The data come from the RNA Mapping Database (RMDB), library TTRDEL. The record gives the reactivity of an RNA of 177 nucleotides to 2A3. The reactions ran in a buffer of 150 mM KOAc, 10 mM MgCl2 and 150 mM bicine (pH 8.5), at 24 C.
RNA sequence: GGGAACGACUCGAGUAGAGUCGAAAAGAUAUGGAUCUAGAACUACGACCAACCUGAGCGAAGAACUCGGAAACGAGGGAGCUCACGCGUCGCUAGAUCCUAAGUCAAAGUAUGGUUCGCCAUACAACCCUAACCUUAGCUUCGGCUAAGGUUAGGGAAAAGAAACAACAACAACAAC
Reactivity to 2A3 in 0.01 (KOAc 150mM, MgCl2 10mM, bicine 150mM(pH8.5), 24C), signal-to-noise 1, nucleotides 027 to 126: g050a020u070a030u100g000g010a020u000c000u050a010g050a300a160c120u130a060c300g000a040c000c000a080a060c000c110u030g010a000g030c030g060a300a090g040a130a070c010u000c000g040g010a070a050a020c000g000a000g020g010g010a030g040c000u030c040a000c040g060c080g010u000c000g080c010u010a010g000a020u000c000c000u050a080a000g030u050c030a170a000a000g010u020a000u010g000g050u060u080c300g060c140c000a000u000a000c000a060a130